[RMDB]
RNA sequence: GGGAACGACUCGAGUAGAGUCGAAAAUGUACAGUUGUUGCAAUAAGUGAAUCAACAGAAAUGAUGAAAAGUGACAGUUGGUUAAGCCCUGGUUUUGCCCAGGAUCUAUCCAGAUGUAUAGGCAGUUUAUUUGGUAAAUUAAGUACGAUAAUGCCAAACGACGAUAAGUUUUCGAACUUAUCGUCGUAAAAGAAACAACAACAACAAC
Reactivity to 2A3 in 0.01 (KOAc 150mM, MgCl2 10mM, bicine 150mM(pH8.5), 24C), signal-to-noise 1, nucleotides 027 to 156: u160g000u020a060c070a100g000u010u050g000u040u050g030c010a040a120u160a300a000g020u060g140a030a070u050c020a010a030c050a040g140a010a200a000u050g080a000u030g050a050a000a100a000g000u050g040a030c000a020g040u080u020g060g000u070u000a000a030g000c000c000c000u030g000g020u000u060u290u170g030c000c000c000a010g010g000a000u000c000u000a050u030c030c050a030g010a110u030g020u130a060u030a050g020g000c020a010g000u060u060u000a080u030u050u030g000g040u000a000a010a150u090u080a060a050g070u020a030c050g000a000u070a140a030u230g090c040c000a070a000
Reactivity to DMS in 0.01 (KOAc 150mM, MgCl2 10mM, bicine 150mM(pH8.5), 24C), signal-to-noise 2, nucleotides 027 to 156: u000g020u000a100c040a120g030u010u010g010u000u000g030c000a110a090u010a110a110g000u020g000a130a080u000c020a040a300c020a180g000a020a220a140u040g000a100u000g010a090a070a110a120g060u000g000a090c030a030g000u010u000g030g030u010u000a050a080g020c030c000c010u000g010g010u000u010u000u010g010c140c040c000a070g010g000a030u000c020u000a040u000c000c010a090g010a040u000g030u000a080u000a120g000g000c040a040g040u010u010u000a060u010u010u000g050g030u000a090a030a090u000u000a050a140g020u000a070c070g020a100u010a040a110u020g000c010c030a040a140